[RMDB]
RNA sequence: GGGAACGACUCGAGUAGAGUCGAAAAGCAUCAAGUAGGACUGGUGUGGACCACAGGUGGAAAUCCAGACAGGCUCGAGCAAUGUUCAGGAUACAGCAGCAAGUGACAGGUUCUGGCCAGCUGUCCCUACUGGGGCUGCAAGGACUAAGAGCCAGGAUCCGUACUCCAUGUUCGCAUGGAGUACGGAAAAAGAAACAACAACAACAAC
Reactivity to 2A3 in 0.01 (KOAc 150mM, MgCl2 10mM, bicine 150mM(pH8.5), 24C), signal-to-noise 1, nucleotides 027 to 156: g030c000a020u040c020a000a010g060u070a090g040g020a020c000u000g040g030u000g040u050g080g080a060c040c030a020c040a060g000g000u060g040g000a040a050a040u010c060c000a020g040a090c070a060g080g000c000u000c050g010a010g000c000a030a220u120g000u120u140c020a000g040g020a080u100a180c050a000g010c010a030g060c050a010a080g060u010g030a030c020a010g030g010u040u000c010u010g000g010c010c010a040g000c000u020g040u060c000c010c000u170a270c190u110g000g000g000g030c000u000g000c090a170a290g070g000a070c040u160a150a000g000a000g050c000c000a000g000g010a010
An RNA of 207 nucleotides, treated with 2A3 and read out base by base. For 2A3 the reverse transcriptase was SuperScript II with manganese. It was measured as part of the RMDB library OK3TST.